This 177-nucleotide RNA was probed chemically with 2A3 and DMS. The DMS profile rests on 128,105 reads. High 2A3 reactivity points to a flexible backbone, as in loops and unpaired stretches. The reactions ran in a buffer of 150 mM KOAc, 10 mM MgCl2 and 150 mM bicine (pH 8.5), at 24 C. Values cover nucleotides 27 to 126. Source: RMDB library OK1LIB, as collected in RNAgym.
[RMDB]
RNA sequence: GGGAACGACUCGAGUAGAGUCGAAAAUGGUUCGGUUACGUACAUGAUAAACAUUUAUCACUGGGCGUGUCCACCUAGUCCCUUUGGGCCACUCUAUAGCACGCGCUCCCCGCUGGGGCCAUGGGCCACAUCCGACGCUGUUCGCGGCGUUGGAUGUAAAAGAAACAACAACAACAAC
Reactivity to 2A3 in 0.01 (KOAc 150mM, MgCl2 10mM, bicine 150mM(pH8.5), 24C), signal-to-noise 9, nucleotides 027 to 126: u160g000g020u110u170c100g010g010u040u070a010c010g000u020a010c000a010u010g010a010u030a020a130a060c150a210u090u070u030a020u010c020a020c150u090g030g040g000c010g000u010g020u000c000c000a010c000c000u010a020g080u060c010c000c000u010u060u030g030g010g010c030c010a070c020u040c030u070a070u110a140g040c040a020c060g040c010g010c020u050c010c010c000c020g100c070u110g000g010g020g000c010c030a080u080g030g030g010c000c010
Reactivity to DMS in 0.01 (KOAc 150mM, MgCl2 10mM, bicine 150mM(pH8.5), 24C), signal-to-noise 9, nucleotides 027 to 126: u030g010g000u010u030c130g020g000u000u010a010c010g010u010a030c020a030u000g000a010u010a010a030a210c300a150u040u000u000a010u000c000a010c210u010g000g000g010c000g010u000g000u000c010c010a050c010c000u000a080g010u000c000c000c010u000u020u020g010g000g000c010c020a100c070u010c070u010a080u020a090g000c050a080c100g000c050g010c040u000c010c010c020c070g020c090u010g000g010g010g000c050c030a070u010g010g000g010c020c040